[RMDB]
RNA sequence: GGGAACGACUCGAGUAGAGUCGAAAAGCAACUUAGGAUUUUAGGCUCCCCGUGCGUAUCUCGAACCAUGCCGGGCCAAACCCACGGGGGCUGGCGGUCCCCGUGCGGUCAAAAUCAAACCGCUGGAAAAACAGUUCUAGCUUCGGCUAGAACUGAAGAUUCACACGUUGUUCGCAACGUGUGAAUCAAAAGAAACAACAACAACAAC
Reactivity to 2A3 in 0.01 (KOAc 150mM, MgCl2 10mM, bicine 150mM(pH8.5), 24C), signal-to-noise 2, nucleotides 027 to 156: g030c020a030a060c060u160u160a200g150g030a270u130u160u060u220a070g010g010c020u090c030c010c060c050g050u110g010c080g010u100a080u080c090u040c080g090a050a030c040c020a070u050g070c030c040g000g030g020c010c000a050a030a020c000c000c010a000c000g010g000g000g000g000c010u000g000g000c000g000g000u000c000c000c010c000g030u000g020c070g000g010u010c010a050a060a020a170u140c030a110a100a050c010c010g000c010u050g000g040a070a070a010a000a010c000a000g010u000u000c000u000a000g000c000u040u030c180g060g000c040u000a000g010a000a000c000u000g000a000a000
Chemical mapping of a 207-nucleotide RNA with 2A3. The reactions ran in a buffer of 150 mM KOAc, 10 mM MgCl2 and 150 mM bicine (pH 8.5), at 24 C. The data come from the RNA Mapping Database (RMDB), library M2RFPK.